RNA sequence: GGGAACGACUCGAGUAGAGUCGAAAAGUCUAGCGAAUGGAUCCCACCCGGGAGACACGCAAGUCGCGAAUUACGCCGACCGGCCAAGGUCAAUCGCAGAACUCAACUGCAUGAGUAAGCUAGACGAACCUAGGAUUUAUUUCGAUAAAUCCUAGGUAAAAGAAACAACAACAACAAC
Reactivity to DMS in 0.01 (KOAc 150mM, MgCl2 10mM, bicine 150mM(pH8.5), 24C), signal-to-noise 9, nucleotides 027 to 126: g010u000c000u000a000g010c000g020a160a110u000g020g010a090u000c000c010c010a220c300c040c050g000g010g010a270g000a030c020a110c070g010c030a090a120g010u000c140g010c020g010a180a100u010u010a080c150g010c030c020g000a100c010c120g000g010c040c030a170a140g010g010u000c020a060a110u000c070g000c030a040g010a070a090c100u010c160a060a090c050u000g000c060a110u000g010a070g000u010a070a190g000c000u000a010g000a020c010g000a070
Reactivity to 2A3 in 0.01 (KOAc 150mM, MgCl2 10mM, bicine 150mM(pH8.5), 24C), signal-to-noise 8, nucleotides 027 to 126: g000u000c000u000a000g000c010g080a120a110u130g100g020a040u020c000c000c000a020c000c020c000g000g030g000a040g000a010c030a020c050g000c040a040a040g180u120c040g000c010g050a110a210u300u100a120c090g020c060c030g020a020c000c010g010g000c000c010a060a020g030g000u010c010a010a050u070c050g000c030a030g030a140a070c040u050c150a060a110c060u100g020c050a070u090g010a010g080u040a040a020g000c000u010a000g000a010c010g000a010